The data come from the RNA Mapping Database (RMDB), library OK2TST.
This 177-nucleotide RNA was probed chemically with 2A3 and DMS.
The 2A3 profile rests on 3,880 reads.
RNA sequence: GGGAACGACUCGAGUAGAGUCGAAAAGAGGGGUACAGCAUCACUCGGACUCUGUGUCCAAUAGCUCUAGCAGGAAGAUUGCUUCGGAAUUUGGCACAAACCAUGCCACUGUGUUCAUGCGCCCAAGCAUAAUGCCGGAGUUCGCUCCGGCAUUAUGAAAAGAAACAACAACAACAAC
Reactivity to 2A3 in 0.01 (KOAc 150mM, MgCl2 10mM, bicine 150mM(pH8.5), 24C), signal-to-noise 3, nucleotides 027 to 126: g110a030g000g020g000g000u050a040c010a030g050c000a040u040c020a020c040u070c070g030g000a020c020u030c070u160g110u040g010u070c000c000a010a060u070a050g020c010u010c010u050a020g010c030a010g060g060a100a050g060a230u070u120g020c010u040u030c010g000g030a110a080u050u050u040g000g010c020a000c020a030a070a020c030c020a030u060g010c020c000a040c020u070g010u010g010u090u030c050a040u080g020c020g010c010c000c000a000a010g090
Reactivity to DMS in 0.01 (KOAc 150mM, MgCl2 10mM, bicine 150mM(pH8.5), 24C), signal-to-noise 5, nucleotides 027 to 126: g010a110g020g000g000g010u000a040c090a080g010c060a080u010c050a060c110u010c110g010g000a070c050u000c230u010g020u010g000u000c010c020a060a060u000a120g010c030u000c050u010a030g020c030a060g000g020a100a100g020a160u000u000g000c040u000u000c130g000g000a050a110u010u000u010g010g020c010a050c050a030a060a130c140c070a130u000g000c060c020a070c100u000g000u010g010u000u010c080a050u010g010c110g010c000c000c020a070a090g000